Structure probing data (2A3 and DMS) for a 177-nucleotide construct. The 2A3 profile rests on 1,094 reads. Conditions: 150 mM KOAc, 10 mM MgCl2 and 150 mM bicine (pH 8.5), 24 C.
[RMDB]
RNA sequence: GGGAACGACUCGAGUAGAGUCGAAAAAGAAUGCUAUCAGUGUUUUAACCAAUGAGAUUCAGCUUUGUAACUUGGCUGGUGCUCACUAUUUAGUUUUGCAUCCAGGUUCUGCAGUAGCCCAAACAACACCACAACCAUUGUUCGCAAUGGUUGUGGUAAAAGAAACAACAACAACAAC
Reactivity to 2A3 in 0.01 (KOAc 150mM, MgCl2 10mM, bicine 150mM(pH8.5), 24C), signal-to-noise 1, nucleotides 027 to 126: a010g020a050a020u070g080c040u040a060u260c090a100g020u030g010u010u020u060u140a010a010c010c030a010a060u100g010a060g010a040u110u090c000a010g020c000u070u090u140g130u210a060a060c060u100u090g040g030c050u050g000g070u050g070c020u010c020a010c010u050a100u200u150u110a070g010u060u120u090u030g040c000a030u060c020c040a030g020g010u060u010c000u040g000c060a030g020u030a010g000c010c000c060a000a110a010c080a020a000c010
Reactivity to DMS in 0.01 (KOAc 150mM, MgCl2 10mM, bicine 150mM(pH8.5), 24C), signal-to-noise 1, nucleotides 027 to 126: a040g010a050a040u000g000c010u000a140u000c120a040g010u000g020u000u010u010u000a050a130c070c090a030a090u040g000a090g010a120u030u010c010a050g000c020u000u030u020g000u000a070a090c110u000u000g020g020c300u020g000g000u000g020c040u000c090a040c100u000a160u000u000u010a080g000u000u000u000u000g000c030a030u000c030c050a050g010g040u000u000c020u000g000c080a090g000u000a090g010c010c000c020a100a050a040c120a100a020c150
High 2A3 reactivity points to a flexible backbone, as in loops and unpaired stretches.